The record gives the reactivity of an RNA of 177 nucleotides to 2A3 and DMS.
[RMDB]
RNA sequence: GGGAACGACUCGAGUAGAGUCGAAAAUGGUAGGGGCAUAGCAUUGGAUGACGUUCAUCGUAAUGCCCUCUUUCUUCGUUUGUCAAGGAGGCUUUGAUGAACCUUAAUUCAUGGGACUCCCAUCCUACGAAAAUGGGGAUUUCGAUCCCCAUUUUCGAAAAGAAACAACAACAACAAC
Reactivity to 2A3 in 0.01 (KOAc 150mM, MgCl2 10mM, bicine 150mM(pH8.5), 24C), signal-to-noise 4, nucleotides 027 to 126: u110g040g040u110a100g000g040g070g040c150a130u030a110g070c050a060u050u160g000g000a000u000g000a000c060g000u000u000c020a010u010c000g120u090a050a000u140g060c080c000c010u020c010u060u030u020c030u070u070c070g220u050u220u250g210u150c050a000a020g020g000a000g000g000c010u060u060u070g000a000u000g000a000a000c000c000u050u230a100a040u020u000c000a000u020g010g010g100a040c010u020c040c010c000a010u030c020c000u040a080
Reactivity to DMS in 0.01 (KOAc 150mM, MgCl2 10mM, bicine 150mM(pH8.5), 24C), signal-to-noise 2, nucleotides 027 to 126: u020g000g010u030a060g000g000g010g000c120a060u020a060g010c060a040u040u050g000g010a020u000g030a180c300g010u000u000c000a020u000c050g040u010a080a070u000g000c050c000c000u020c000u000u010u010c100u040u050c160g040u010u070u070g000u020c220a020a020g020g000a000g000g000c000u000u000u000g020a010u000g040a000a010c000c030u010u000a230a190u000u000c010a020u000g000g010g000a170c160u000c000c000c020a170u020c010c000u000a130
DMS adducts were read by reverse transcription with MarathonRT. The RNA was probed in 150 mM KOAc, 10 mM MgCl2 and 150 mM bicine (pH 8.5) at 24 C. The 2A3 profile rests on 1,553 reads. Values cover nucleotides 27 to 126. DMS (dimethyl sulfate) methylates the pairing face of unpaired adenines and cytosines.